Structure probing data (2A3 and DMS) for a 177-nucleotide construct.
For DMS the reverse transcriptase was MarathonRT.
For 2A3 the reverse transcriptase was SuperScript II with manganese.
The 2A3 profile rests on 1,159 reads.
DMS (dimethyl sulfate) methylates the pairing face of unpaired adenines and cytosines.
RNA sequence: GGGAACGACUCGAGUAGAGUCGAAAAAGAAAAGCGCAUGAGAAGAUCACUGAUAGCCAAAAACGCGAUUAUAAAGGGAAAUCUAUGAGCAACAGCGUCCGGCCUAACCGAAAGAUGCCGAAAAAAAUCGUUAUAAUGAGUUCGCUCAUUAUAACGAAAAAGAAACAACAACAACAAC
Reactivity to 2A3 in 0.01 (KOAc 150mM, MgCl2 10mM, bicine 150mM(pH8.5), 24C), signal-to-noise 1, nucleotides 027 to 126: a000g110a050a080a000a000g090c080g020c110a080u210g030a040g050a160a080g020a030u040c000a030c130u040g010a070u080a060g020c010c010a000a000a070a020a000c070g000c000g030a030u100u110a080u220a080a090a050g010g010g000a000a050a080u000c020u020a080u060g040a030g000c040a010a020c000a010g040c000g030u000c000c000g000g040c040c010u030a050a040c030c000g000a000a020a010g000a000u120g020c010c000g040a090a000a000a000a000a000a020
Reactivity to DMS in 0.01 (KOAc 150mM, MgCl2 10mM, bicine 150mM(pH8.5), 24C), signal-to-noise 2, nucleotides 027 to 126: a040g010a140a070a080a210g000c070g030c020a050u000g010a130g020a080a030g010a030u010c040a070c090u000g000a070u000a090g000c040c040a050a060a050a080a050c120g010c070g000a050u000u000a060u020a030a100a080g000g000g020a040a060a050u000c050u010a090u000g030a090g000c010a050a050c030a060g010c030g020u010c050c060g030g020c020c050u010a050a110c090c050g000a050a050a040g010a030u000g010c020c030g030a010a010a050a070a040a060a040